Conditions: 150 mM KOAc, 10 mM MgCl2 and 150 mM bicine (pH 8.5), 24 C. Structure probing data (2A3 and DMS) for a 177-nucleotide construct. Reactivities are given for positions 27 through 126. For DMS, 1,265 sequencing reads were counted. For 2A3, 1,885 sequencing reads were counted.
RNA sequence: GGGAACGACUCGAGUAGAGUCGAAAAGUGAACUUUUCACUCAGCAGCCAUUCACUGAGUGAGCUGUGUGACAGAUGCUGCUCUGUGCCCUGAGGCCACCAGGGAAGGCCAGACAGACAGGAGCCUGGCUGCUGAUCAUGUUCGCAUGAUCAGCAGCAAAAGAAACAACAACAACAAC
Reactivity to 2A3 in 0.01 (KOAc 150mM, MgCl2 10mM, bicine 150mM(pH8.5), 24C), signal-to-noise 2, nucleotides 027 to 126: g070u050g040a040a090c080u110u040u120u050c000a000c010u050c030a030g020c010a020g000c050c010a040u070u100c120a150c300u150g030a030g020u030g040a070g000c020u050g030u000g030u050g120a000c010a020g040a100u110g040c020u020g000c000u000c000u020g040u040g040c000c000c000u030g030a120g060g000c020c020a040c000c020a010g020g070g010a050a050g090g030c040c000a020g010a040c020a030g070a030c010a020g070g070a010g040c020c000u010g110
Reactivity to DMS in 0.01 (KOAc 150mM, MgCl2 10mM, bicine 150mM(pH8.5), 24C), signal-to-noise 2, nucleotides 027 to 126: g010u000g000a050a130c160u010u010u010u000c040a010c050u010c010a080g030c060a130g020c020c030a080u020u000c020a130c110u010g010a100g010u010g000a060g020c060u000g000u000g020u000g000a070c180a080g020a100u000g000c040u010g000c050u000c000u000g020u000g010c030c010c020u000g000a170g000g000c030c010a080c070c010a040g020g020g010a140a120g000g020c030c010a100g000a060c040a040g010a050c030a120g010g030a100g020c050c020u000g000
Values are in units of 0.01, from 0 to 300, in steps of 10. Source: RMDB library OK2TRN, as collected in RNAgym.